[RMDB]
RNA sequence: GGGAACGACUCGAGUAGAGUCGAAAAUGAUUGAGCGUAGCACACACUCAGACUGUACGACAGUCUGACACACACCUACGCUAGUGCAUCGUGAGUGUGAUAUCGAUGUAGCACGAAAAUGAAGUAACGGUUUGCUGUGUUUCGACACAGCAAACCGAAAAGAAACAACAACAACAAC
Reactivity to 2A3 in 0.01 (KOAc 150mM, MgCl2 10mM, bicine 150mM(pH8.5), 24C), signal-to-noise 1, nucleotides 027 to 126: u140g000a060u060u190g030a030g130c010g000u020a000g000c090a020c000a000c000a010c100u080c020a000g000a000c000u010g090u210a160c140g090a060c140a000g000u000c000u000g020a010c000a000c000a000c020a020c050c000u010a000c000g000c000u000a000g090u010g000c010a000u000c000g000u010g040a090g040u080g000u040g070a050u010a020u160c010g000a010u060g040u060a090g110c050a060c080g010a030a050a010a020u130g090a250a020g040u120a110a060
Reactivity to DMS in 0.01 (KOAc 150mM, MgCl2 10mM, bicine 150mM(pH8.5), 24C), signal-to-noise 1, nucleotides 027 to 126: u020g000a130u000u000g000a020g040c000g040u010a020g000c040a000c090a050c030a150c190u000c010a000g050a010c000u020g030u000a110c300g040a200c000a000g000u000c020u000g000a000c050a100c100a080c050a110c100c000u000a040c020g000c010u000a040g010u000g020c020a070u000c000g030u000g000a110g000u000g000u000g000a140u000a080u000c000g020a080u000g000u000a050g020c080a010c120g000a090a040a050a050u050g000a150a110g000u000a120a170